[RMDB]
RNA sequence: GGGAACGACUCGAGUAGAGUCGAAAAUGUUGCAGUACCAGAUGGCAUCUUAAAUCCGAUCUGCAAAUAAGCAUGUAGAAAGCUGAUGUGGGCUUUAGCUGGACGGGGGUUCAAUUCCCCCCGGCUCGAAAUCAUUUACCUUCGGGUAAAUGAUUUCAAAAGAAACAACAACAACAAC
Reactivity to 2A3 in 0.01 (KOAc 150mM, MgCl2 10mM, bicine 150mM(pH8.5), 24C), signal-to-noise 2, nucleotides 027 to 126: u110g030u000u060g020c020a010g030u060a070c010c010a010g000a050u030g010g020c050a110u040c100u130u180a070a110a050u000c010c030g000a060u000c020u010g000c040a040a030a000u130a080a010g040c070a030u140g010u040a080g170a150a050a000g000c020u070g030a130u090g090u030g100g020g020c000u070u080u110a010g020c010u000g040g020a030c080g080g000g000g000g000u040u120c030a050a040u100u090c000c000c010c050c000c000g020g000c000u030c020
Reactivity to DMS in 0.01 (KOAc 150mM, MgCl2 10mM, bicine 150mM(pH8.5), 24C), signal-to-noise 2, nucleotides 027 to 126: u000g010u020u000g000c030a030g010u010a060c040c030a090g010a030u020g010g010c160a060u000c110u000u010a100a100a080u010c040c050g000a060u000c030u020g010c010a010a040a070u000a070a060g000c070a110u010g010u010a070g010a060a080a080g000c040u000g020a100u020g020u000g010g010g010c060u000u000u000a070g020c020u010g030g020a100c090g020g000g000g000g000u030u010c230a060a280u000u000c030c000c000c010c000c010g000g000c060u010c180